[RMDB]
RNA sequence: GGGAACGACUCGAGUAGAGUCGAAAAAGUCUAGAAUACCCUUAGAUACCAUAACAGAACUUGGAGCUAUUGGCUCUUGACACUUAAGGCUAUAAAUAUAGGCGACAAAGCUCCUCUUCCUAUAUCGACAACUCAAGAUGUUCGCAUCUUGAGUUGUAAAAGAAACAACAACAACAAC
Reactivity to DMS in 0.01 (KOAc 150mM, MgCl2 10mM, bicine 150mM(pH8.5), 24C), signal-to-noise 2, nucleotides 027 to 126: a110g000u020c030u010a070g000a030a110u010a150c100c020c020u010u020a040g020a060u010a110c030c020a070u010a100a060c230a090g000a070a050c170u000u000g000g020a110g030c000u010a130u000u010g010g030c070u000c040u000u010g000a030c090a060c140u010u010a040a070g040g010c020u010a040u010a070a070a060u000a080u010a090g010g010c130g030a070c030a010a070a280g000c020u010c000c060u000c030u000u000c000c000u000a020u000a060u000c160g000
Reactivity to 2A3 in 0.01 (KOAc 150mM, MgCl2 10mM, bicine 150mM(pH8.5), 24C), signal-to-noise 2, nucleotides 027 to 126: a000g030u020c010u000a000g010a120a040u140a160c000c000c000u010u010a050g000a160u160a090c030c010a080u020a160a120c040a130g120a140a040c010u040u050g010g010a000g010c020u030a080u150u100g050g010c010u000c000u030u000g040a040c040a010c060u090u150a070a040g050g020c000u070a060u070a170a280a100u230a060u080a170g080g050c030g040a040c050a010a090a000g030c030u020c020c000u020c010u000u060c010c000u080a080u000a000u300c020g010

Structure probing data (DMS and 2A3) for a 177-nucleotide construct. It was measured as part of the RMDB library OK2TRN. The 2A3 profile rests on 934 reads. For DMS the reverse transcriptase was MarathonRT.